[RMDB]
RNA sequence: GGGAACGACUCGAGUAGAGUCGAAAACAUUUGAGGCCAUUUGGGCUUAAGCGUAUUCCAUGGAAAGUUAUCGUCCCACAUUUCGGAAAUUAUAUUCCGAGCCAGCAAGAAAAUCUUCUCUGUUACAAGUAGAAGGUAGUUUCGACUACCUUCUACUAAAAGAAACAACAACAACAAC
Reactivity to DMS in 0.01 (KOAc 150mM, MgCl2 10mM, bicine 150mM(pH8.5), 24C), signal-to-noise 5, nucleotides 027 to 126: c060a090u010u010u000g010a050g010g000c020c020a270u030u030u030g020g030g010c020u020u010a060a060g000c030g020u000a090u000u000c020c020a060u020g010g000a060a070a080g000u010u010a110u010c070g000u000c000c000c010a090c170a110u020u020u000c000g010g000a020a020a120u020u020a140u010a170u000u000c000c000g000a030g000c170c060a020g020c090a080a090g010a030a040a050a100u000c050u010u000c030u010c050u000g010u010u000a060c120a070
Reactivity to 2A3 in 0.01 (KOAc 150mM, MgCl2 10mM, bicine 150mM(pH8.5), 24C), signal-to-noise 8, nucleotides 027 to 126: c030a050u050u040u190g100a070g000g040c010c030a090u080u150u300g110g000g010c020u040u050a050a020g030c020g020u030a110u090u040c020c030a030u050g030g040a060a050a040g030u080u070a080u120c050g040u030c010c010c000a050c020a040u100u130u030c010g000g110a030a000a020u270u140a130u100a100u140u010c010c000g000a000g010c010c000a030g020c040a080a030g050a070a140a040a060u070c060u050u000c030u000c000u010g050u070u050a060c050a100